[RMDB]
Structure probing data (DMS and 2A3) for a 177-nucleotide construct. Conditions: 150 mM KOAc, 10 mM MgCl2 and 150 mM bicine (pH 8.5), 24 C. Source: RMDB library OK2TRN, as collected in RNAgym. Values cover nucleotides 27 to 126. Values are in units of 0.01, from 0 to 300, in steps of 10.
RNA sequence: GGGAACGACUCGAGUAGAGUCGAAAAGACGGGGUUUCACCGUGUUAGCCAGGAUGGUCUCAAUCUCCUGACCUCGUGCUCCGCCCUCCUCGGCCUCCCAAAGUGCUGGGAUUACAGGUGUGAGACAAUACACCAGCUGAUUCGUCAGCUGGUGUAUAAAAGAAACAACAACAACAAC
Reactivity to DMS in 0.01 (KOAc 150mM, MgCl2 10mM, bicine 150mM(pH8.5), 24C), signal-to-noise 3, nucleotides 027 to 126: g010a100c040g000g000g010g020u010u000u010c060a080c040c000g020u000g010u000u000a080g010c030c010a080g030g020a080u010g030g020u000c070u000c140a050a090u010c030u000c010c010u000g000a060c060c020u000c120g040u000g020c040u010c000c050g020c010c000c020u000c050c010u000c050g020g010c040c020u010c010c010c030a040a040a050g030u020g020c050u000g000g000g010a070u000u010a070c130a080g010g020u000g020u000g010a040g010a070c120a100
Reactivity to 2A3 in 0.01 (KOAc 150mM, MgCl2 10mM, bicine 150mM(pH8.5), 24C), signal-to-noise 1, nucleotides 027 to 126: g070a000c020g000g000g000g000u050u150u150c060a050c040c030g000u050g030u070u130a020g040c000c000a000g080g000a070u230g040g080u040c050u030c190a110a130u040c010u010c030c030u030g070a090c000c000u020c020g120u110g120c020u000c020c000g000c030c000c000u000c040c000u020c020g030g030c000c010u050c010c020c010a020a070a000g120u150g000c030u030g000g000g000a010u040u070a060c020a060g000g000u030g040u060g050a040g020a040c070a040